[RMDB]
RNA sequence: GGGAACGACUCGAGUAGAGUCGAAAAGGAGUGCUACCGAAAGGUAGCACUCCAACAAAUCGGUGUAAUUGCAGCCCGUAUUACACCGUGCGGCACAGCGGAAACGCUGAUGUCGUAUAGAGGGCUAAAUUACUAUCGCAUUCGUGCGAUAGUAAUUAAAAGAAACAACAACAACAAC
Reactivity to 2A3 in 0.01 (KOAc 150mM, MgCl2 10mM, bicine 150mM(pH8.5), 24C), signal-to-noise 1, nucleotides 027 to 126: g010g010a000g000u010g000c000u000a000c000c000g070a070a070a080g040g000u000a000g010c010a000c000u020c000c010a010a020c000a000a010a000u080c000g020g000u000g000u000a010a010u040u100g120c070a020g000c020c000c000g000u020a020u000u000a010c000a000c000c000g000u030g000c010g000g000c010a000c000a000g000c010g010g010a090a070a010c020g010c000u010g010a100u000g000u000c000g000u010a010u020a010g150a030g000g020g000c000u000a010
Reactivity to DMS in 0.01 (KOAc 150mM, MgCl2 10mM, bicine 150mM(pH8.5), 24C), signal-to-noise 3, nucleotides 027 to 126: g000g000a030g050u000g010c020u010a010c000c000g000a110a090a210g010g010u000a010g020c000a000c000u000c000c000a010a040c100a040a050a050u010c000g000g010u000g000u000a000a010u000u010g030c140a050g010c010c000c010g020u000a030u000u010a000c000a000c000c000g030u000g000c020g020g000c000a010c010a000g000c000g020g000a120a090a230c000g030c020u000g000a070u000g020u000c010g030u000a050u010a120g030a100g010g010g010c010u000a060